RNA sequence: GGGAACGACUCGAGUAGAGUCGAAAAGUGUGUCGCUACGGACACGUAUCGUAGCUCUGAUCGUUAAACCUAAGAUCUGGGUAUUUGAGCCGAAUCCUAGGGCUCUUUCUAGGGAUUUUUAAGAAAAGGGUAUAGAUAACUUCGGUUAUCUAUACCCAAAAGAAACAACAACAACAAC
Reactivity to DMS in 0.01 (KOAc 150mM, MgCl2 10mM, bicine 150mM(pH8.5), 24C), signal-to-noise 3, nucleotides 027 to 126: g010u030g020u040g000u020c050g030c080u010a090c140g000g000a030c090a020c100g050u040a030u010c050g020u020a150g000c010u010c040u010g010a040u000c020g000u060u010a060a100a130c020c040u030a060a060g000a040u020c060u000g020g020g000u080a030u000u040u030g010a030g010c030c000g000a060a070u020c050c030u000a070g000g000g000c030u000c030u000u010u010c050u010a030g010g000g010a080u010u010u010u010u010a060a110g000a090a040a080a090
Reactivity to 2A3 in 0.01 (KOAc 150mM, MgCl2 10mM, bicine 150mM(pH8.5), 24C), signal-to-noise 4, nucleotides 027 to 126: g160u110g010u000g010u040c040g030c150u180a040c060g070g000a010c010a000c070g010u070a060u100c050g010u040a010g010c000u030c050u060g100a080u010c010g030u050u160a160a140a090c020c020u040a090a010g030a060u040c050u080g040g030g000u130a110u050u110u090g010a000g000c010c000g010a070a090u060c010c000u050a000g040g000g000c000u020c030u050u100u000c010u020a040g010g000g060a010u060u050u020u060u240a130a090g070a060a130a000a020

Chemical mapping of a 177-nucleotide RNA with DMS and 2A3. The DMS profile rests on 4,406 reads. The reactions ran in a buffer of 150 mM KOAc, 10 mM MgCl2 and 150 mM bicine (pH 8.5), at 24 C. For DMS the reverse transcriptase was MarathonRT. For 2A3 the reverse transcriptase was SuperScript II with manganese.